[RMDB]
Structure probing data (DMS and 2A3) for a 177-nucleotide construct. Values cover nucleotides 27 to 126. Values are in units of 0.01, from 0 to 300, in steps of 10. For 2A3, 1,004 sequencing reads were counted.
RNA sequence: GGGAACGACUCGAGUAGAGUCGAAAAUACCGGUCUUGCUGAAGAUAAUAGCUUUAAUUUUCUUCGGAUUCGGAUGUAGGCAGUCUAGUUGCCCAACAUGUGAUAGCGUCAAGGUCGUCAUUGAUGAGUCCUACGGUACGUUCGCGUACCGUAGGACAAAAGAAACAACAACAACAAC
Reactivity to DMS in 0.01 (KOAc 150mM, MgCl2 10mM, bicine 150mM(pH8.5), 24C), signal-to-noise 2, nucleotides 027 to 126: u000a120c100c010g020g010u000c050u000u000g020c030u000g000a020a020g000a010u010a040a010u010a160g010c210u000u000u000a110a040u020u010u000u000c010u010u000c000g000g000a130u020u000c040g030g010a050u000g030u010a120g000g000c040a090g010u020c160u000a120g040u000u000g000c030c010c030a050a020c040a030u010g010u000g010a020u000a100g020c110g010u000c030a020a060g000g000u010c020g030u010c140a080u000u000g000a080u000g020a180
Reactivity to 2A3 in 0.01 (KOAc 150mM, MgCl2 10mM, bicine 150mM(pH8.5), 24C), signal-to-noise 2, nucleotides 027 to 126: u080a010c040c000g010g020u010c040u030u100g020c060u080g010a040a010g020a000u010a080a020u030a070g060c010u080u070u210a090a040u040u080u080u030c010u000u000c030g110g080a140u040u080c010g020g070a010u000g000u110a000g050g000c010a010g000u020c060u190a080g100u110u030g040c010c020c020a120a000c060a030u190g020u060g300a050u010a050g080c040g060u060c070a030a000g080g000u000c020g000u040c030a110u030u110g120a110u060g020a070